[RMDB]
RNA sequence: GGGAACGACUCGAGUAGAGUCGAAAAGUGUCGGACUCGCUAGUGCGAAUAUAUUUUAUCCCUAAACAGGGAGUGGAAAGCACGUCCUGGAGUGGAAAACACGUCCAUCCCAAAGCGAGAAAUGAAAGGCAAAUUACUUAUUCGUAAGUAAUUUGCCAAAAGAAACAACAACAACAAC
Reactivity to 2A3 in 0.01 (KOAc 150mM, MgCl2 10mM, bicine 150mM(pH8.5), 24C), signal-to-noise 5, nucleotides 027 to 126: g090u080g070u070c040g030g040a050c010u010c010g000c030u060a030g010u010g030c010g090a150a000u110a000u000a050u090u140u110u110a080u020c000c000c000u110a230a260a030c060a080g010g000g000a020g010u060g040g080a080a040a020g020c000a000c020g060u100c020c030u010g020g020a020g010u060g020g050a080a120a070a030c060a010c030g120u000c000c010a040u040c020c000c000a020a010a000g020c010g020a020g060a040a080a030u150g040a080a030a030
Reactivity to DMS in 0.01 (KOAc 150mM, MgCl2 10mM, bicine 150mM(pH8.5), 24C), signal-to-noise 6, nucleotides 027 to 126: g040u000g020u010c050g000g000a220c010u000c010g000c000u000a130g020u010g010c000g000a070a130u010a090u000a060u000u000u010u010a140u010c000c000c000u000a070a120a120c270a060g010g010g000a030g010u010g000g010a070a100a160g000c030a000c010g010u000c100c080u000g010g020a100g020u000g000g000a050a070a070a070c160a080c200g000u010c010c010a040u000c010c010c010a030a080a040g010c020g000a020g000a090a070a140u000g000a040a090a120

Source: RMDB library M2PK90, as collected in RNAgym.
An RNA of 177 nucleotides, treated with 2A3 and DMS and read out base by base.
Values cover nucleotides 27 to 126.
2A3 is a SHAPE reagent: it acylates the 2'-hydroxyl of flexible nucleotides of all four kinds.
For DMS, 6,261 sequencing reads were counted.
The RNA was probed in 150 mM KOAc, 10 mM MgCl2 and 150 mM bicine (pH 8.5) at 24 C.
For DMS the reverse transcriptase was MarathonRT.